[RMDB]
RNA sequence: GGGAACGACUCGAGUAGAGUCGAAAAACCCAGAAAUUUUACGUUCCAAUUUAUCCUCCACCGUUCUAGAACUAAAAAAAUUAGGUAUUGAUGACUUGGUCCAUUUCGAUUUUAUGGAUCCACCGGACAGUUUUAAAUGAUUCGUCAUUUAAAACUGAAAAGAAACAACAACAACAAC
Reactivity to DMS in 0.01 (KOAc 150mM, MgCl2 10mM, bicine 150mM(pH8.5), 24C), signal-to-noise 5, nucleotides 027 to 126: a080c010c000c000a250g010a100a120a090u010u000u000u010a200c070g000u000u010c020c020a120a090u010u000u000a080u010c010c020u010c010c020a060c050c040g010u000u000c070u000a080g010a070a090c070u020a000a000a050a130a070a090a110u010u000a060g000g000u000a070u000u000g010a080u000g010a080c100u000u010g010g010u000c010c010a030u010u000u010c180g000a100u010u010u000u000a030u000g000g010a030u010c020c130a080c100c030g010g010a270
Reactivity to 2A3 in 0.01 (KOAc 150mM, MgCl2 10mM, bicine 150mM(pH8.5), 24C), signal-to-noise 2, nucleotides 027 to 126: a000c020c000c000a050g130a060a300a070u190u260u150u250a060c040g020u070u030c040c000a070a080u080u160u110a120u180c020c020u030c010c010a030c010c010g010u040u010c000u040a060g030a170a060c040u170a060a090a000a000a060a040a140u110u130a070g000g040u080a060u100u080g070a070u050g000a050c040u060u100g030g000u000c010c020a040u090u090u070c090g050a120u160u030u010u100a000u020g000g030a000u020c030c000a010c040c040g040g050a030
Annotation
This 177-nucleotide RNA was probed chemically with DMS and 2A3. The DMS profile rests on 4,047 reads. Reactivities are given for positions 27 through 126. Conditions: 150 mM KOAc, 10 mM MgCl2 and 150 mM bicine (pH 8.5), 24 C.